[RMDB]
RNA sequence: GGGAACGACUCGAGUAGAGUCGAAAAGAUAUGGAUUCUGAAAGUAGUCUGGGUGUCGGAAACGACACAUAGAGCUUCAGAAUCCUAAGUCAAAACCUGUUAUGUUACUUCGGUAACAUAACAGGAAUCAAGAUAAUAUGUUCGCAUAUUAUCUUGAAAAAGAAACAACAACAACAAC
Reactivity to 2A3 in 0.01 (KOAc 150mM, MgCl2 10mM, bicine 150mM(pH8.5), 24C), signal-to-noise 5, nucleotides 027 to 126: g020a020u050a030u140g000g000a010u010u000c010u010g090a180a160a070g070u180a100g300u020c010u040g090g020g000u010g000u010c000g020g000a030a070a050c010g000a000c000a000c000a000u010a000g000a010g000c000u000u000c000a000g000a000a000u000c000c000u000a030a010g030u010c020a010a020a110a230c000c000u000g000u000u000a010u010g010u000u000a010c000u030u060c290g180g000u000a010a000c000a000u000a000a000c000a000g000g000a000a070
Reactivity to DMS in 0.01 (KOAc 150mM, MgCl2 10mM, bicine 150mM(pH8.5), 24C), signal-to-noise 7, nucleotides 027 to 126: g000a020u000a300u010g000g000a010u000u000c000u000g000a040a030a050g030u000a120g030u000c000u000g010g000g020u000g010u000c000g010g000a070a070a140c000g010a010c000a010c000a020u000a010g040a280g000c010u000u000c010a010g000a020a010u000c000c000u000a010a090g000u000c020a130a100a140a190c000c000u000g000u000u000a000u000g010u000u010a000c000u000u030c260g040g010u000a010a000c000a000u000a000a010c000a010g000g000a020a040
This 177-nucleotide RNA was probed chemically with 2A3 and DMS. Conditions: 150 mM KOAc, 10 mM MgCl2 and 150 mM bicine (pH 8.5), 24 C. High 2A3 reactivity points to a flexible backbone, as in loops and unpaired stretches.